[RMDB]
RNA sequence: GGGAACGACUCGAGUAGAGUCGAAAACUCGCUGAACAGCACGCCGCGGGCGUUGGCCAGGAUGCCCAGCGGAUAGCCGUGCAACCGAGCCCAGCCGGUCACCAGAGACGACCCGUACAGCGGCUUGGACGCUUAGCAGUUUCGACUGCUAAGCGUCAAAAGAAACAACAACAACAAC
Reactivity to DMS in 0.01 (KOAc 150mM, MgCl2 10mM, bicine 150mM(pH8.5), 24C), signal-to-noise 2, nucleotides 027 to 126: c000u000c010g050c020u000g010a140a070c170a090g010c020a020c080g000c020c000g050c000g000g020g000c000g050u000u010g000g020c140c100a090g000g000a050u000g020c000c000c000a110g050c020g000g010a040u000a040g000c300c060g020u000g000c020a130a090c090c000g010a060g010c000c010c040a060g020c100c060g000g000u000c050a100c050c080a130g000a100g000a120c050g010a070c030c000c060g010u000a070c070a130g020c100g010g000c030u000u000g000
Reactivity to 2A3 in 0.01 (KOAc 150mM, MgCl2 10mM, bicine 150mM(pH8.5), 24C), signal-to-noise 1, nucleotides 027 to 126: c010u020c010g000c050u070g090a200a070c020a060g000c020a030c020g000c000c000g000c000g000g020g000c020g000u030u060g060g040c100c040a070g140g000a010u020g010c020c020c040a050g000c000g010g000a020u070a020g100c040c050g010u010g020c000a000a050c000c010g010a010g100c000c020c040a010g040c010c000g040g010u030c010a050c030c060a090g040a000g020a240c050g030a070c030c020c020g020u060a040c040a110g020c050g010g000c000u010u060g060

The record gives the reactivity of an RNA of 177 nucleotides to DMS and 2A3. It was measured as part of the RMDB library OK2TRN. Values are in units of 0.01, from 0 to 300, in steps of 10.